[RMDB]
RNA sequence: GGGAACGACUCGAGUAGAGUCGAAAAGCUGUGUGCGCCUGCAUGCGUGUGGCACACGUCUGUGCGUGGGUGAGCGGAUAUGCAGUGUGCGCCUGCAUGCGUGUGGCACACGUGUGUGCGUGGGUGAGCGGAUACGCGCUGUGUGCCCCUGCGUGCAACCUACUAUGCGCUUCGGCGCAUAGUAGGUAAAAGAAACAACAACAACAAC
Reactivity to 2A3 in 0.01 (KOAc 150mM, MgCl2 10mM, bicine 150mM(pH8.5), 24C), signal-to-noise 1, nucleotides 027 to 156: g000c160u060g070u070g000u010g300c000g010c000c050u000g000c060a000u000g050c000g060u020g070u140g300g030c050a010c000a000c000g030u000c050u170g150u170g040c040g040u160g000g000g010u040g150a040g010c000g050g020a130u030a000u070g050c070a050g070u020g040u070g300c010g120c000c000u000g000c000a000u050g000c000g000u070g000u000g070g110c040a000c000a070c100g000u000g010u000g000u000g090c000g000u100g030g220g000u070g000a110g080c040g000g040a050u090a100c030g000c000g030c150u150g040u020g020u000g000c000c000c000c000u020g020c010g000u040g000c020a030

Overview
Structure probing data (2A3) for a 207-nucleotide construct. For 2A3 the reverse transcriptase was SuperScript II with manganese. 2A3 is a SHAPE reagent: it acylates the 2'-hydroxyl of flexible nucleotides of all four kinds.